Source: RMDB library OK2TRN, as collected in RNAgym. Structure probing data (DMS and 2A3) for a 177-nucleotide construct. The 2A3 profile rests on 2,104 reads. The RNA was probed in 150 mM KOAc, 10 mM MgCl2 and 150 mM bicine (pH 8.5) at 24 C.

RNA sequence: GGGAACGACUCGAGUAGAGUCGAAAAAGUCGGUGCGAGCGGGGCGGCAGCAGUGCGGGCGCCGCGGUCAGCCAAAUGGUGAAGGGCAGCCAGAUUCGUUCGGUCUCGGCUUUGCUCAGCAUGCUCAUAAUCCUCAUUCUUUCGAGAAUGAGGAUUAAAAAGAAACAACAACAACAAC
Reactivity to DMS in 0.01 (KOAc 150mM, MgCl2 10mM, bicine 150mM(pH8.5), 24C), signal-to-noise 4, nucleotides 027 to 126: a090g010u000c060g010g010u000g020c040g000a090g010c030g020g010g020g030c020g000g000c040a050g020c090a120g020u010g010c050g020g010g020c070g020c030c040g000c040g020g000u010c040a230g000c030c030a060a140a090u010g010g010u000g010a120a070g010g010g010c020a120g010c010c020a050g000a080u000u010c060g020u000u010c180g000g010u000c020u000c100g010g000c000u000u010u010g010c010u000c010a070g010c050a060u000g010c040u010c070a190
Reactivity to 2A3 in 0.01 (KOAc 150mM, MgCl2 10mM, bicine 150mM(pH8.5), 24C), signal-to-noise 2, nucleotides 027 to 126: a030g080u080c060g030g020u080g020c090g020a080g020c000g000g050g020g040c030g030g000c010a040g000c000a030g100u100g070c100g000g140g050c060g000c050c030g040c000g010g050u040c010a000g000c030c000a030a150a100u200g050g020u090g060a120a100g030g020g000c000a000g020c000c000a020g000a100u140u190c060g050u110u070c080g070g000u040c020u020c070g000g000c000u070u090u070g000c000u000c000a020g040c010a030u160g000c000u010c050a080